Source: RMDB library M2RFPK, as collected in RNAgym. The record gives the reactivity of an RNA of 207 nucleotides to 2A3 and DMS. The DMS profile rests on 2,385 reads.

[RMDB]
RNA sequence: GGGAACGACUCGAGUAGAGUCGAAAAGCCACAUAUCCCGUGACAUUGCGACAGCAAGGCUGGCGGUAGGUAGUCCUGGGCGGCGACAGCCUUGGACUGCGGCGUAAAGGUGUACCUGGGGCCGUUAUAACGCGGUAACAGUUCGCUGUUACCGCAACAUUCAGCUAUCCUUCGGGAUAGCUGAAUGAAAAGAAACAACAACAACAAC
Reactivity to 2A3 in 0.01 (KOAc 150mM, MgCl2 10mM, bicine 150mM(pH8.5), 24C), signal-to-noise 2, nucleotides 027 to 156: g060c060c010a050c010a030u230a030u020c000c020c040g000u070g050a060c090a110u050u120g000c030g040a030c060a050g030c030a110a080g040g020c010u020g020g020c030g070g020u060a050g000g080u000a000g010u000c010c060u010g030g000g040c020g020g000c070g030a060c080a030g000c000c000u000u000g000g000a000c010u020g000c020g000g000c020g030u070a080a070a000g020g010u050g020u120a130c040c030u020g050g000g010g010c010c000g010u030u080a090u030a160a030c110g000c000g000g000u000a000a000c000a020g020u100u110c170g050c090u000g000u000u000a000c000c000g000c000a000a000
Reactivity to DMS in 0.01 (KOAc 150mM, MgCl2 10mM, bicine 150mM(pH8.5), 24C), signal-to-noise 1, nucleotides 027 to 156: g000c070c030a100c050a040u000a150u000c050c070c010g010u000g020a080c040a160u000u010g020c000g020a090c110a150g000c100a070a090g030g030c000u000g020g030c010g000g010u000a030g060g010u000a030g000u000c000c010u000g020g020g000c010g070g000c020g010a110c090a180g000c020c010u010u000g010g020a020c030u000g010c030g020g040c030g040u000a060a100a060g000g030u000g000u020a020c050c020u000g090g000g000g010c020c070g000u000u000a120u000a060a130c120g000c010g000g000u000a010a010c020a010g040u000u000c190g020c060u000g010u000u000a010c000c000g000c000a000a030